[RMDB]
RNA sequence: GGGAACGACUCGAGUAGAGUCGAAAAGCUUAUGACAAGUUGUUUUCAGAUCGUGAUCAGAUUUUAAGUCGUUGUGCUAAAUUAGAAGCUGAUUUAAACACCUUUUAUGAAAAUGGUUAUGCAAACACAUGAGAUACGAUUUCGAUCGUAUCUCAUGAAAAGAAACAACAACAACAAC
Reactivity to 2A3 in 0.01 (KOAc 150mM, MgCl2 10mM, bicine 150mM(pH8.5), 24C), signal-to-noise 3, nucleotides 027 to 126: g000c020u190u120a100u260g030a050c040a120a060g010u010u030g010u030u040u000u050c040a040g020a120u070c030g030u030g030a030u030c020a030g030a100u030u070u020u060a040a000g040u040c070g080u130u110g040u070g030c020u060a060a110a150u110u060a090g040a190a000g020c020u010g010a030u050u070u060a070a080a020c010a040c010c040u050u030u060u100a210u130g050a070a030a000a020u070g010g000u050u050a050u100g020c030a090a050a010c040a000
Reactivity to DMS in 0.01 (KOAc 150mM, MgCl2 10mM, bicine 150mM(pH8.5), 24C), signal-to-noise 2, nucleotides 027 to 126: g020c050u000u000a070u000g010a130c180a100a100g020u000u000g020u000u000u000u000c040a080g000a100u000c080g030u010g020a080u000c020a040g000a110u000u000u000u000a020a060g010u000c090g010u000u010g020u000g000c100u000a040a080a090u010u000a040g000a070a080g020c050u000g000a030u000u010u000a080a080a120c070a020c030c020u000u000u000u000a090u010g000a030a030a060a040u010g000g000u000u000a070u000g010c100a060a080a100c180a140